This 207-nucleotide RNA was probed chemically with 2A3. 2A3 adducts were read by reverse transcription with SuperScript II with manganese. The RNA was probed in 150 mM KOAc, 10 mM MgCl2 and 150 mM bicine (pH 8.5) at 24 C. Reactivities are given for positions 27 through 156. It was measured as part of the RMDB library M2RFPK.

[RMDB]
RNA sequence: GGGAACGACUCGAGUAGAGUCGAAAAACGCGGAGUACGCUCCGCGACAACACUUCUUUCGACCCGCUAACCGAGACCUAUGGGUCGGUAAAUUACGUCUCUAUCUUACUCACAUAACAUCGCACAAAAAACGUGGUUCGGUUCGCCGAACCACGAAGCAAUACAGAACCUUCGGGUUCUGUAUUGCAAAAGAAACAACAACAACAAC
Reactivity to 2A3 in 0.01 (KOAc 150mM, MgCl2 10mM, bicine 150mM(pH8.5), 24C), signal-to-noise 1, nucleotides 027 to 156: a000c000g010c000g010g000a000g050u050a040c170g100c130u010c000c010g000c000g020a000c000a020a000c010a000c040u100u140c010u070u210u150c000g000a010c010c000c000g030c170u240a050a020c000c010g020a020g020a060c000c000u040a060u230g040g000g000u020c030g000g000u020a020a040a040u140u140a010c040g020u000c010u000c000u020a040u070c030u140u130a060c070u080c040a060c000a060u220a230a050c040a120u160c150g060c150a060c090a030a080a150a030a010a020c090g000u000g000g000u000u000c000g000g020u050u020c030g000c080c060g010a000a000c040c000a000c000g000a000a000